Annotation: The record gives the reactivity of an RNA of 207 nucleotides to 2A3 and DMS. For DMS the reverse transcriptase was MarathonRT.
[RMDB]
RNA sequence: GGGAACGACUCGAGUAGAGUCGAAAAGCGACUGGGAUCGUCAUCCUGGCUAGUUCGCGUGAUCAGGAGAUCCGAGUAGAGGCAUAGCGAACUACGCACGGAGAAGCCUUGAGGGAAAUGCCGUAGGACCCGGGUUCGAUUCCCGGCAGCUCCACCGGUAAUCCUGUCAGUUCGCUGACAGGAUUACAAAAGAAACAACAACAACAAC
Reactivity to 2A3 in 0.01 (KOAc 150mM, MgCl2 10mM, bicine 150mM(pH8.5), 24C), signal-to-noise 2, nucleotides 027 to 156: g020c020g080a070c010u090g000g000g040a030u010c010g010u050c020a090u030c000c010u010g010g020c020u010a000g010u020u000c010g000c000g000u030g000a100u060c040a060g170g030a160g060a100u110c030c010g050a040g010u190a070g040a050g050g040c020a020u050a070g030c010g000a010a000c000u010a010c120g000c040a030c030g030g030a050g040a050a000g000c030c000u120u180g070a230g050g020g000a040a110a050u130g040c010c080g020u070a030g020g070a030c020c000c020g000g010g000u040u030c030g010a030u150u230c010c010c020g010g000c010a030g000c010u030c050c020a010c000c030g020
Reactivity to DMS in 0.01 (KOAc 150mM, MgCl2 10mM, bicine 150mM(pH8.5), 24C), signal-to-noise 1, nucleotides 027 to 156: g060c010g000a000c040u000g020g000g010a050u000c070g040u010c090a220u010c000c010u010g050g000c030u000a020g000u000u000c050g030c060g000u000g030a140u010c030a220g010g030a240g000a110u000c000c050g020a160g030u000a130g010a200g000g000c110a120u000a080g010c000g000a030a030c030u000a080c110g190c000a130c100g010g000a200g010a120a200g020c020c030u030u000g030a170g000g010g030a040a080a110u010g020c010c000g060u020a090g010g000a130c050c000c010g040g000g030u000u000c140g000a300u000u000c000c010c030g000g000c030a080g000c000u000c040c010a210c020c020g000
It was measured as part of the RMDB library RSTRND. In probing experiments dimethyl sulfate is read out at A N1 and C N3, which are open when not base-paired.